[RMDB]
RNA sequence: GGGAACGACUCGAGUAGAGUCGAAAAGAUAUGGACUGCCUUCCUUGAAGCUGGGAACUAUUCGGAAACGAACGAAUUCCCAGUGGAGAAGGAUAGUCCUAAGUCAAAACGGACGUUCGCGUCCGAACUAUUUCGUCCAGUUCGCUGGACGAAAUAGAAAAGAAACAACAACAACAAC
Reactivity to DMS in 0.01 (KOAc 150mM, MgCl2 10mM, bicine 150mM(pH8.5), 24C), signal-to-noise 2, nucleotides 027 to 126: g020a000u000a300u000g000g010a010c000u000g020c000c010u000u030c000c300u010u000g010a090a140g010c010u010g000g000g000a010a020c060u010a300u000u000c020g030g000a090a030a140c030g020a010a060c150g010a010a150u010u000c000c000c020a000g000u000g010g030a030g000a030a010g010g000a010u000a000g000u000c000c000u000a010a050g010u000c030a080a040a080a210c010g010g000a000c000g010u010u000c200g020c020g000u000c000c000g000a060a100
Reactivity to 2A3 in 0.01 (KOAc 150mM, MgCl2 10mM, bicine 150mM(pH8.5), 24C), signal-to-noise 2, nucleotides 027 to 126: g030a010u090a050u180g010g000a000c010u030g020c000c020u000u040c010c030u110u030g020a040a010g000c000u000g030g010g020a040a010c100u050a120u020u020c010g060g000a110a100a100c040g030a040a010c010g020a080a300u020u000c000c000c000a020g020u020g000g010a040g000a040a000g020g000a020u070a010g030u000c000c000u010a100a000g050u030c070a060a010a100a140c010g000g000a010c000g050u070u070c300g030c010g090u000c010c000g000a010a010
An RNA of 177 nucleotides, treated with DMS and 2A3 and read out base by base. For DMS, 1,305 sequencing reads were counted. For 2A3 the reverse transcriptase was SuperScript II with manganese. For 2A3, 2,624 sequencing reads were counted. Conditions: 150 mM KOAc, 10 mM MgCl2 and 150 mM bicine (pH 8.5), 24 C.